[RMDB]
RNA sequence: GGGAACGACUCGAGUAGAGUCGAAAAGAGUGGUCUGCCGCUGUGAUUAACGGUAAGUUACCAGAACGAACCCCAGCUAUGGAUGCUCUGCGCAGAAUCCGCAAUGCUGACCCUCAGUUGAUUGCUGCGCUAUACCCAGACCAAGCUGAGCUAUUCCAUGAAAUAGUCUGUUCGCAGACUAUUUCAUAAAAGAAACAACAACAACAAC
Reactivity to 2A3 in 0.01 (KOAc 150mM, MgCl2 10mM, bicine 150mM(pH8.5), 24C), signal-to-noise 5, nucleotides 027 to 156: g080a020g070u070g020g020u010c020u040g030c020c030g000c080u090g060u130g180a270u230u220a090a020c030g020g030u060a110a050g030u080u130a060c030c030a050g050a110a030c040g020a040a060c000c030c000c000a000g000c010u080a110u240g010g000a010u040g020c020u030c040u100g020c030g000c000a000g010a010a010u050c060c050g020c100a080a150u210g030c050u060g110a180c040c030c000u100c030a040g020u070u060g050a010u000u070g130c010u000g000c010g000c010u010a020u070a060c010c050c000a020g040a090c000c010a020a000g020c010u020g050a020g030c010u100a100u220u060c090c070
Reactivity to DMS in 0.01 (KOAc 150mM, MgCl2 10mM, bicine 150mM(pH8.5), 24C), signal-to-noise 4, nucleotides 027 to 156: g000a120g030u000g000g020u010c020u000g010c030c020g000c020u000g030u000g010a180u000u000a060a040c090g030g010u000a030a100g020u000u000a080c030c020a140g010a070a110c050g000a060a190c060c020c030c010a050g020c020u000a300u010g010g000a150u000g000c060u010c030u000g030c050g020c040a020g000a050a040u000c000c110g010c060a070a130u000g020c010u000g010a120c070c030c030u000c040a220g000u000u010g000a110u010u000g020c030u000g010c000g030c030u000a110u010a060c040c020c020a110g020a220c040c100a050a100g010c010u000g000a060g000c060u010a190u000u000c030c040